[RMDB]
RNA sequence: GGGAACGACUCGAGUAGAGUCGAAAAGCCGGGGUGUGCAUCGAGCCGACGCUGACCCUGCCAGGCCUGCGAGCUGCGGUAGACGGCGCCGGAAAGUGGCGGCGGUGGAUCGGCGGGCGCGCCGCGCGCCUGCAUGAUACUUCGGUAUCAUGCAGGCAAAAGAAACAACAACAACAAC
Reactivity to 2A3 in 0.01 (KOAc 150mM, MgCl2 10mM, bicine 150mM(pH8.5), 24C), signal-to-noise 9, nucleotides 027 to 126: g060c040c020g040g010g010g010u050g010u020g020c040a150u090c090g070a040g030c010c000g010a020c010g000c020u080g170a300c030c000c020u010g000c000c000a060g010g090c000c010u070g040c050g130a190g020c020u040g010c080g150g080u080a060g030a050c000g020g020c010g000c010c010g050g020a140a200a050g180u080g010g000c000g000g010c000g000g010u050g040g040a170u040c010g000g000c000g010g020g000c010g000c000g010c000c020g120c010g000c020
Reactivity to DMS in 0.01 (KOAc 150mM, MgCl2 10mM, bicine 150mM(pH8.5), 24C), signal-to-noise 3, nucleotides 027 to 126: g020c080c030g000g000g010g020u000g020u030g010c030a130u030c040g000a090g000c030c000g010a070c040g000c010u000g010a100c060c040c010u000g000c040c040a220g010g020c020c000u010g010c080g000a300g000c020u020g020c100g040g030u020a030g010a290c040g000g000c040g010c020c020g010g000a040a040a090g020u000g010g020c020g020g000c010g000g000u020g010g000a090u020c030g000g010c090g000g000g010c030g000c010g020c050c030g000c050g010c100
Structure probing data (2A3 and DMS) for a 177-nucleotide construct. For DMS the reverse transcriptase was MarathonRT. For DMS, 6,854 sequencing reads were counted. The reactions ran in a buffer of 150 mM KOAc, 10 mM MgCl2 and 150 mM bicine (pH 8.5), at 24 C. For 2A3, 11,126 sequencing reads were counted.